[RMDB]
RNA sequence: GGGAACGACUCGAGUAGAGUCGAAAAAACGUCGUGUAUACAACGGAUUCUUUAGGCAGGAUACUUAUGAGGCAUUUUCUGUUAUCAAUUUGAAGCACACUGAUGUUCUUGAAGAUCUUACUAUGACGUAUUACUACGCAGUCAUCCAACCUGACUCCGUACUGUUCCCUUUCGAGGGAACAGUACGAAAAGAAACAACAACAACAAC
Reactivity to 2A3 in 0.01 (KOAc 150mM, MgCl2 10mM, bicine 150mM(pH8.5), 24C), signal-to-noise 3, nucleotides 027 to 156: a000a000c030g030u040c000g010u030g000u050a110u050a170c040a080a030c060g040g030a120u160u040c010u030u080u090a060g040g000c030a010g010g040a010u040a170c010u080u120a100u200g010a030g040g000c040a020u010u040u040u060c020u030g040u040u060a070u180c050a130a130u070u080u300g030a070a020g000c010a030c000a000c060u030g020a040u040g050u080u090c030u010u060g030a040a030g010a000u000c000u030u070a090c030u080a040u170g010a010c070g010u010a030u050u090a030c030u000a030c020g000c020a020g010u000c000a020u070c040c040a020a080c010c010u010g010a040c000u000c030
Reactivity to DMS in 0.01 (KOAc 150mM, MgCl2 10mM, bicine 150mM(pH8.5), 24C), signal-to-noise 1, nucleotides 027 to 156: a040a040c040g040u000c030g060u010g020u000a120u000a080c050a060a250c080g010g020a120u000u000c050u000u000u010a190g010g040c040a040g040g000a030u000a030c020u000u010a060u010g000a150g010g030c040a030u010u010u000u000c070u000g000u000u000a030u010c040a050a170u010u000u010g000a040a130g000c060a050c020a100c100u010g000a070u000g000u000u010c030u000u010g040a090a030g000a090u010c040u000u000a060c030u000a130u000g010a080c050g030u010a080u000u000a140c020u010a030c030g020c020a070g010u000c010a070u000c050c040a110a050c020c010u000g030a120c030u000c070